[RMDB]
RNA sequence: GGGAACGACUCGAGUAGAGUCGAAAAGAUAUGGAAUUGCGAUGAAAUUCCCAGCUUGGAUUUAUCGGAAACGAUUGUCAGCUGCGAAUGGAGCAAUUCCUAAGUCAAAGUCUGCUUCGGCAGACAAGCUCUACUAGUAGUUCGCUACUAGUAGAGCAAAAGAAACAACAACAACAAC
Reactivity to DMS in 0.01 (KOAc 150mM, MgCl2 10mM, bicine 150mM(pH8.5), 24C), signal-to-noise 4, nucleotides 027 to 126: g020a070u000a300u000g000g010a020a000u010u000g030c000g000a110u020g010a140a100a010u000u000c010c080c000a010g010c020u000u010g010g000a020u000u010u000a010u010c000g020g000a130a110a170c010g010a000u000u000g000u000c000a020g010c010u000g020c300g010a020a000u000g010g000a070g010c000a010a010u000u010c000c000u000a020a050g000u010c020a090a110a130g000u000c000u000g010c000u000u010c160g020g010c000a000g000a010c010a010a090
Reactivity to 2A3 in 0.01 (KOAc 150mM, MgCl2 10mM, bicine 150mM(pH8.5), 24C), signal-to-noise 4, nucleotides 027 to 126: g000a030u060a060u170g020g020a000a010u020u010g010c090g300a300u040g090a050a030a000u000u000c020c040c000a010g010c020u170u270g200g000a080u300u300u140a030u080c000g020g020a110a030a040c020g010a020u000u010g010u010c010a010g000c000u000g010c030g010a000a000u030g000g020a010g000c000a000a000u010u000c000c000u000a110a010g010u000c040a140a030a030g000u000c000u000g020c000u070u060c140g150g000c000a000g000a000c000a000a010